[RMDB]
RNA sequence: GGGAACGACUCGAGUAGAGUCGAAAAUCAGUCAGAAUUGUAUAGGCUGAACUAGUUGUCUAUGGUGUUCACUGUUGGUUCUGCUGUUAAUUAUAGGUACUCUUCAUUUAGGGCACAAACGAGAUGAAUGUUUUCCUCGAAAAUCGAUGUGGAUGGAGCAUUAAUGGUAGUUCGCUACCAUUAAUGCAAAAGAAACAACAACAACAAC
Reactivity to DMS in 0.01 (KOAc 150mM, MgCl2 10mM, bicine 150mM(pH8.5), 24C), signal-to-noise 3, nucleotides 027 to 156: u000c010a030g020u010c020a080g010a110a140u000u020g030u000a180u000a110g010g010c010u000g000a060a190c130u000a160g020u000u000g010u000c050u010a150u000g000g010u000g000u000u000c040a070c030u000g030u020u010g020g030u000u000c030u010g050c030u010g020u000u000a070a110u000u000a140u000a090g030g010u000a020c020u000c010u010u000c120a100u000u000u000a050g020g020g030c070a060c070a060a050a100c120g000a130g020a090u000g010a030a080u010g000u000u000u020u000c030c000u000c040g000a060a040a060a100u000c070g000a080u000g040u000g020g010a210u000g020g040a300
Reactivity to 2A3 in 0.01 (KOAc 150mM, MgCl2 10mM, bicine 150mM(pH8.5), 24C), signal-to-noise 5, nucleotides 027 to 156: u060c000a010g120u050c000a010g110a140a150u160u100g100u160a120u130a090g050g020c050u020g010a040a020c020u040a050g110u050u110g030u100c060u090a130u160g060g000u040g020u050u050c030a020c040u010g010u050u060g030g030u030u020c010u020g010c010u010g050u070u030a090a050u080u100a100u060a070g060g020u060a040c020u020c000u110u030c030a070u070u090u150a030g000g030g020c080a010c040a090a100a020c060g020a030g010a080u090g010a060a060u070g050u030u070u030u050c020c000u040c030g080a040a020a050a120u170c070g050a050u070g010u010g050g010a040u030g020g030a020